RNA sequence: GGGAACGACUCGAGUAGAGUCGAAAACUGCGUGGAAGAUGUCCCCAGGGAGGACACAGCACUGUCUCCCAACACCCAGAGAAUGGCAGGGAGGGGGCUGGACUGGGUCUGUGCAGCGUGGCCCAAGGCUACCCCCUUAUUUCGAUAAGGGGGUAGCAAAAGAAACAACAACAACAAC
Reactivity to DMS in 0.01 (KOAc 150mM, MgCl2 10mM, bicine 150mM(pH8.5), 24C), signal-to-noise 3, nucleotides 027 to 126: c020u000g020c020g050u000g020g020a070a120g000a160u010g020u010c080c020c020c050a090g020g000g000a080g010g010a290c110a040c030a040g010c090a050c070u000g010u010c030u010c010c010c010a060a210c160a140c240c000c020a030g000a120g030a190a120u010g020g010c120a180g000g010g000a060g010g000g010g000g030c010u000g000g000a110c050u010g000g000g020u000c020u010g010u000g000c020a020g000c000g000u010g000g000c010c000c010a110a100g010
Reactivity to 2A3 in 0.01 (KOAc 150mM, MgCl2 10mM, bicine 150mM(pH8.5), 24C), signal-to-noise 2, nucleotides 027 to 126: c000u000g000c040g020u020g060g040a110a060g080a300u190g060u160c010c000c000c000a030g050g040g020a050g010g090a070c050a010c020a210g030c020a040c140u040g120u100c000u010c000c000c020a050a000c060a030c040c010c000a030g070a010g090a250a190u060g030g010c090a030g050g050g000a020g000g020g000g000g000c000u030g000g020a030c020u010g010g060g000u000c000u030g040u020g040c010a000g000c010g070u060g060g020c010c010c020a030a010g130
Structure probing data (DMS and 2A3) for a 177-nucleotide construct.
Reactivities are given for positions 27 through 126.
The 2A3 profile rests on 2,355 reads.
It was measured as part of the RMDB library OK2TRN.